RNA sequence: GGGAACGACUCGAGUAGAGUCGAAAAGGAACGUUGUUCGCAACGUUCCGUGCCGGAAACGGACAUGACGAUCGCGCGCAUGUCGGGAAACCGUAAACGCCAGCAUCAUGGUGUUCGCACCAUGAAACACAAGAUCCUAUUUCGAUAGGAUCUUGUGAAAAGAAACAACAACAACAAC
Reactivity to DMS in 0.01 (KOAc 150mM, MgCl2 10mM, bicine 150mM(pH8.5), 24C), signal-to-noise 9, nucleotides 027 to 126: g010g010a010a010c000g020u000u010g000u000u010c200g020c000a000a000c000g010u000u000c000c000g010u000g020c100c010g000g010a050a090a220c030g000g000a030c030a020u000g000a070c050g010a110u000c190g010c110g010c070g000c030a090u000g010u000c020g010g000g000a110a090a150c030c010g000u010a030a090a120c110g010c030c030a110g010c180a150u000c010a000u000g000g010u000g000u000u010c170g010c010a020c000c000a010u000g010a040a100a160
Reactivity to 2A3 in 0.01 (KOAc 150mM, MgCl2 10mM, bicine 150mM(pH8.5), 24C), signal-to-noise 6, nucleotides 027 to 126: g000g000a000a010c010g000u000u010g020u060u110c240g000c100a000a000c010g000u000u000c000c000g000u030g010c020c000g020g010a120a140a020c060g070g000a010c010a030u050g050a060c030g050a090u190c140g010c020g000c000g000c180a010u030g010u040c000g000g000g010a110a070a010c000c010g020u100a080a080a050c090g040c050c030a030g050c020a110u040c000a000u010g000g010u020g040u050u060c190g000c040a000c000c000a000u000g000a030a050a000